[RMDB]
RNA sequence: GGGAACGACUCGAGUAGAGUCGAAAACGUUUAGAGUUGGCGAAGUCAACUACUUAUAAUUCUUCUUUAGUUGGAGCGGGUGCGAAGUACGAUUUAGUCGGCGACGCUAUCCAAGUACCUUUAGCAGACCAAGAAUUAUUCUUUAACGACUUGGACGACCUCUAUGACGAUUCGUCGUCAUAGAGGUAAAAGAAACAACAACAACAAC
Reactivity to 2A3 in 0.01 (KOAc 150mM, MgCl2 10mM, bicine 150mM(pH8.5), 24C), signal-to-noise 1, nucleotides 027 to 156: c040g010u020u050u110a120g010a000g040u000u000g050g000c030g190a240a080g040u030c010a040a010c050u190a090c060u140u060a000u040a130a100u000u030c040u030u000c010u030u220u030a100g020u020u040g050g030a020g000c020g000g000g050u040g020c000g010a070a000g010u060a120c000g000a020u050u110u240a190g090u070c010g000g000c040g010a010c000g000c090u130a010u030c000c000a030a090g040u030a060c000c000u010u050u140a070g030c100a000g000a020c040c000a010a020g000a070a000u020u040a070u180u000c060u100u180u060a080a100c100g040a000c000u010u100g010g040a010c000g000